[RMDB]
RNA sequence: GGGAACGACUCGAGUAGAGUCGAAAAAAUGCCGCCUCAGUUCCAAGCUCUCUCGUGGCACUGUAAACAGUCCUAUUGAGUUAGGGGCAGUCAACCACGUUGCGAAGCUAAAUUAUCUGGUCGAGAGUUACGAUUCCCUACUUCGGUAGGGAAUCAACAGAUGAGUACUGUUCGCAGUACUCAUCUGAAAAGAAACAACAACAACAAC
Reactivity to 2A3 in 0.01 (KOAc 150mM, MgCl2 10mM, bicine 150mM(pH8.5), 24C), signal-to-noise 4, nucleotides 027 to 156: a000a010u080g020c010c010g000c000c000u040c040a060g010u090u050c030c020a040a000g000c000u010c000u000c000u030c030g020u020g010g010c090a010c030u010g040u060a080a100a100c020a090g120u080c000c000u030a050u060u100g170a210g260u030u040a040g000g000g000g000c000a000g010u010c010a010a050c010c000a010c030g110u110u070g030c050g060a080a010g010c020u040a010a160a060u210u170a110u060c050u050g010g020u030c030g060a010g010a010g150u060u110a040c090g000a000u000u000c010c000c000u000a000c000u020u040c110g060g000u000a000g000g000g000a000a000u000c000a000a000
Reactivity to DMS in 0.01 (KOAc 150mM, MgCl2 10mM, bicine 150mM(pH8.5), 24C), signal-to-noise 2, nucleotides 027 to 156: a040a070u000g000c000c010g020c020c010u010c010a100g000u000u000c010c060a180a300g010c020u000c070u000c010u000c010g030u000g020g010c080a030c010u000g020u000a000a090a070c060a200g030u000c020c000u010a040u000u000g000a220g020u000u000a000g000g000g000g010c000a020g000u010c000a080a050c030c000a040c070g000u000u000g000c070g000a060a120g000c030u010a040a040a060u000u010a060u000c050u000g020g040u000c050g020a100g000a150g000u000u010a090c100g010a060u000u000c000c000c000u000a010c000u000u000c290g090g020u000a010g010g000g000a000a000u000c000a030a150
This 207-nucleotide RNA was probed chemically with 2A3 and DMS. It was measured as part of the RMDB library M2RFPK. 2A3 adducts were read by reverse transcription with SuperScript II with manganese. Values are in units of 0.01, from 0 to 300, in steps of 10.